Chemical mapping of a 177-nucleotide RNA with DMS and 2A3. The reactions ran in a buffer of 150 mM KOAc, 10 mM MgCl2 and 150 mM bicine (pH 8.5), at 24 C. For DMS, 2,561 sequencing reads were counted.

RNA sequence: GGGAACGACUCGAGUAGAGUCGAAAAGCUCGAGAGGGGAUUCCUGGACCCUCAGGUGCAACCCACGGCCUCCUCAUCCAUCUUCAUCAACAUCAUCCCUCCCCUCGAUACGGUGACUGAAGAGGGCCUUAGAUCACCUUUUCGAAGGUGAUCUAAGAAAAGAAACAACAACAACAAC
Reactivity to DMS in 0.01 (KOAc 150mM, MgCl2 10mM, bicine 150mM(pH8.5), 24C), signal-to-noise 3, nucleotides 027 to 126: g020c030u010c040g010a200g000a040g010g010g020g030a140u000u010c050c020u000g000g020a120c000c020c010u010c020a030g000g000u000g010c040a080a100c020c000c010a130c180g000g020c010c030u000c010c030u010c050a060u000c030c040a060u000c020u000u000c050a040u000c040a070a050c080a060u000c060a110u000c010c010c020u000c040c000c000c000u000c050g030a080u010a080c160g000g000u020g010a090c050u010g000a080a080g010a060g000g000g010c180
Reactivity to 2A3 in 0.01 (KOAc 150mM, MgCl2 10mM, bicine 150mM(pH8.5), 24C), signal-to-noise 1, nucleotides 027 to 126: g050c050u070c080g270a280g010a020g190g000g050g070a120u140u130c030c020u070g050g080a080c000c010c000u000c030a000g120g080u150g020c040a000a100c000c040c000a020c020g040g030c000c030u040c000c000u030c000a000u030c020c000a020u020c010u050u050c030a060u060c030a050a090c000a100u120c000a130u010c050c000c020u040c050c000c000c030u000c000g020a020u020a100c030g000g010u030g030a020c040u000g020a040a040g040a060g020g010g000c020